[RMDB]
RNA sequence: GGGAACGACUCGAGUAGAGUCGAAAACCUCGUUAAUCAAUGGGAAAAACGUAACUGCAAACGACGAUACGUUCGCACUGGCAGCCUAAGGGCCGCCGUCCUCUGCCUAGUUCACUGACGGGCUAGUGUCGCAAGACCGGUAGCAAUACCGACAGAGCAUACGUUCUAGCUUCGGCUAGAACGUAUGAAAAGAAACAACAACAACAAC
Reactivity to 2A3 in 0.01 (KOAc 150mM, MgCl2 10mM, bicine 150mM(pH8.5), 24C), signal-to-noise 4, nucleotides 027 to 156: c010c000u010c040g020u050u170a100a060u130c120a130a180u240g110g040g050a050a060a040a020a000c040g030u100a100a050c080u090g010c030a080a120a060c040g080a030c050g080a100u050a150c030g040u010u050c010g000c040a010c130u080g010g020c010a010g010c020c000u100a120a190g050g010g000c010c000g020c020c010g030u050c000c000u010c000u010g000c000c000u010a010g000u040u030c040a090c240u210g160a090c170g000g010g010c000u000a000g020u000g010u020c010g000c050a070a070g010a020c010c020g000g010u010a010g030c040a080a060u010a030c000c000g010a000c020a000g000a010g010
Reactivity to DMS in 0.01 (KOAc 150mM, MgCl2 10mM, bicine 150mM(pH8.5), 24C), signal-to-noise 2, nucleotides 027 to 156: c020c000u000c060g040u000u010a060a190u030c080a110a090u010g010g000g010a010a060a080a090a120c040g040u000a070a080c000u020g010c030a060a060a070c000g000a130c070g020a220u020a150c020g060u020u000c020g090c040a140c060u020g010g000c000a000g000c110c020u010a160a150g110g000g040c010c010g030c040c000g010u020c030c010u020c010u000g030c030c000u000a100g000u000u000c080a180c010u020g010a030c060g070g000g000c030u020a060g010u000g050u000c060g030c140a090a050g020a020c000c000g000g010u000a030g000c120a110a160u010a060c010c030g030a070c010a120g000a070g000

This 207-nucleotide RNA was probed chemically with 2A3 and DMS. Values are in units of 0.01, from 0 to 300, in steps of 10. For 2A3 the reverse transcriptase was SuperScript II with manganese. The reactions ran in a buffer of 150 mM KOAc, 10 mM MgCl2 and 150 mM bicine (pH 8.5), at 24 C. For DMS, 2,128 sequencing reads were counted. DMS adducts were read by reverse transcription with MarathonRT. The 2A3 profile rests on 2,673 reads.